This 177-nucleotide RNA was probed chemically with DMS and 2A3.
The RNA was probed in 150 mM KOAc, 10 mM MgCl2 and 150 mM bicine (pH 8.5) at 24 C.
2A3 adducts were read by reverse transcription with SuperScript II with manganese.
Source: RMDB library OK1LIB, as collected in RNAgym.
Reactivities are given for positions 27 through 126.
RNA sequence: GGGAACGACUCGAGUAGAGUCGAAAAGGAAAGAAUGCUCUCAUGGCGCAAAUUCUUCGCACAUGGCGAAGUAUACUAUGACUGUGCCCUCAACUUACGGGUACCGUUAGUUACAAAGAGAGCGGAAGGCAUAAGUAUUCUUCGGAAUACUUAUGCCAAAAGAAACAACAACAACAAC
Reactivity to DMS in 0.01 (KOAc 150mM, MgCl2 10mM, bicine 150mM(pH8.5), 24C), signal-to-noise 4, nucleotides 027 to 126: g000g000a070a080a040g000a120a070u060g000c000u010c000u000c010a110u020g010g030c140g000c120a070a100a150u000u010c000u000u000c000g020c000a200c210a110u020g010g020c000g000a020a020g010u000a030u050a080c110u020a070u020g000a030c020u010g020u000g010c010c010c060u020c210a060a080c290u030u010a080c210g010g000g000u000a020c010c080g000u000u020a040g000u000u000a160c110a050a050a120g000a000g000a020g010c000g020g000a120a080
Reactivity to 2A3 in 0.01 (KOAc 150mM, MgCl2 10mM, bicine 150mM(pH8.5), 24C), signal-to-noise 6, nucleotides 027 to 126: g130g050a070a100a020g140a080a020u180g000c010u010c000u000c020a050u070g090g000c070g000c090a030a130a100u120u020c010u010u000c000g020c000a110c120a300u170g300g000c000g000a010a000g010u010a020u020a040c070u060a070u210g060a020c010u000g000u010g000c000c000c000u120c070a140a230c060u090u150a040c100g000g010g060u020a030c000c000g000u000u020a010g010u040u030a050c050a020a120a010g020a000g020a000g000c050g000g020a060a020